The record gives the reactivity of an RNA of 177 nucleotides to 2A3. 2A3 adducts were read by reverse transcription with SuperScript II with manganese. It was measured as part of the RMDB library OK1LIB.

RNA sequence: GGGAACGACUCGAGUAGAGUCGAAAAGCUCGGAGACGAGCAAGGCUGACAAAACUAUGUCCCAACCUCCACGUGGUGUCGGCUGGAUAAUGCUGCAUUAUGUUGCAUUUAUCAACUGGGAAUGAAAAUCCACGCCCUCAUUCGUGAGGGCGUGGAUAAAAGAAACAACAACAACAAC
Reactivity to 2A3 in 0.01 (KOAc 150mM, MgCl2 10mM, bicine 150mM(pH8.5), 24C), signal-to-noise 2, nucleotides 027 to 126: g040c000u000c000g020g000a050g030a050c030g000a000g000c010a000a030g040g000c000u030g000a000c000a010a080a030a020c070u050a050u090g060u000c040c000c000a000a010c000c010u060c000c010a060c090g070u100g000g000u000g000u060c000g000g070c000u020g000g000a000u020a020a000u010g020c030u000g020c000a030u140u150a060u300g010u050u010g000c000a000u040u040u230a030u050c010a000a000c000u000g000g010g060a010a020u100g030a040a010a000